[RMDB]
Chemical mapping of a 207-nucleotide RNA with DMS and 2A3. DMS adducts were read by reverse transcription with MarathonRT. The reactions ran in a buffer of 150 mM KOAc, 10 mM MgCl2 and 150 mM bicine (pH 8.5), at 24 C. Source: RMDB library RNAMAK, as collected in RNAgym.
RNA sequence: GGGAACGACUCGAGUAGAGUCGAAAAUGGUUGUUCGCAACCAAAGCUCGGGGUCCGUUUGACGAUGGAAGAAGCAACAGCUUACUGAAGCCUCCACGGUAAGACAUGCUUCCCAUCCGAGGACGGAGGCACCCAAUUAACGUUCUUCGGAACGUAAAGAAUAAUACUUGUUCGCAAGUAUUAUUCUAAAAGAAACAACAACAACAAC
Reactivity to DMS in 0.01 (KOAc 150mM, MgCl2 10mM, bicine 150mM(pH8.5), 24C), signal-to-noise 4, nucleotides 027 to 156: u000g030g020u000u000g020u010u000c200g040c020a080a040c010c000a040a090a170g010c100u000c060g000g020g020g000u000c010c010g020u000u010u000g000a290c150g000a050u010g010g010a130a080g000a040a050g020c000a040a090c050a180g010c020u000u020a020c020u010g000a070a110g030c070c010u030c010c070a300c030g020g030u000a010a020g000a060c060a300u000g000c010u000u000c010c000c000a050u010c010c010g010a300g000g010a050c010g000g010a020g010g010c060a180c000c000c000a080a120u010u000a090a060c020g030u000u000c010u000u000c300g020g010a050a020c020g030u010a030a130
Reactivity to 2A3 in 0.01 (KOAc 150mM, MgCl2 10mM, bicine 150mM(pH8.5), 24C), signal-to-noise 7, nucleotides 027 to 156: u080g010g000u020u010g010u070u110c250g030c090a010a030c000c000a030a080a020g090c060u080c110g010g010g000g050u000c010c000g000u010u010u060g010a010c010g000a000u000g010g030a270a200g000a020a000g100c010a020a090c040a130g060c010u000u000a000c000u030g120a170a070g080c030c050u090c060c050a040c010g000g000u000a000a000g030a080c040a080u070g000c000u000u000c000c000c000a000u000c000c010g000a010g000g020a010c010g000g000a000g020g020c050a160c010c000c010a010a020u130u110a050a010c000g000u000u000c000u030u050c140g110g000a010a000c000g010u050a090a170